An RNA of 207 nucleotides, treated with DMS and 2A3 and read out base by base. The 2A3 profile rests on 4,033 reads. It was measured as part of the RMDB library OK3TST. Conditions: 150 mM KOAc, 10 mM MgCl2 and 150 mM bicine (pH 8.5), 24 C.
RNA sequence: GGGAACGACUCGAGUAGAGUCGAAAAUAAGCACAACGGUUCGUUGUUAAAGGAUCGAGUGAGAGAAGACACUCCAAAGGAAGGCUAUGAACUGACAACAGAGCCUGAGCCUUGUGCUUUGAAGAUGGAGGAAGACUACCAUUCAAGAAGUGCAAGACACCACUAUUUACUUCGGUAAAUAGUGGUGAAAAGAAACAACAACAACAAC
Reactivity to DMS in 0.01 (KOAc 150mM, MgCl2 10mM, bicine 150mM(pH8.5), 24C), signal-to-noise 2, nucleotides 027 to 156: u000a070a190g010c070a070c030a110a090c120g000g020u000u000c030g030u000u000g000u000u000a150a120a100g010g010a060u000c000g020a080g060u040g010a180g010a180g050a060a060g000a150c000a040c060u010c040c060a040a060a100g020g030a140a020g020g010c010u000a050u020g030a060a120c080u000g020a110c050a060a150c010a070g010a040g000c020c010u000g010a110g030c030c000u020u010g020u000g000c000u000u010u000g000a230a080g020a030u000g020g010a200g040g020a150a030g000a130c040u000a140c010c020a050u000u000c030a090a300g000a030a040g030u000g040c140a060a060g020a190
Reactivity to 2A3 in 0.01 (KOAc 150mM, MgCl2 10mM, bicine 150mM(pH8.5), 24C), signal-to-noise 4, nucleotides 027 to 156: u050a010a000g030c020a020c010a080a090c110g010g020u030u030c020g010u020u030g030u030u100a070a080a040g070g020a050u100c050g000a010g010u050g020a060g000a010g030a130a020g040a010c020a020c030u010c010c030a090a030a000g070g000a010a020g050g020c010u030a050u040g020a060a040c040u090g060a020c030a100a010c010a080g020a000g020c010c030u050g010a050g010c000c000u010u010g000u000g010c000u000u000u020g040a080a040g010a000u020g020g010a010g020g050a050a070g070a070c000u110a220c030c010a000u080u080c020a030a010g000a030a010g020u030g000c050a000a010g020a010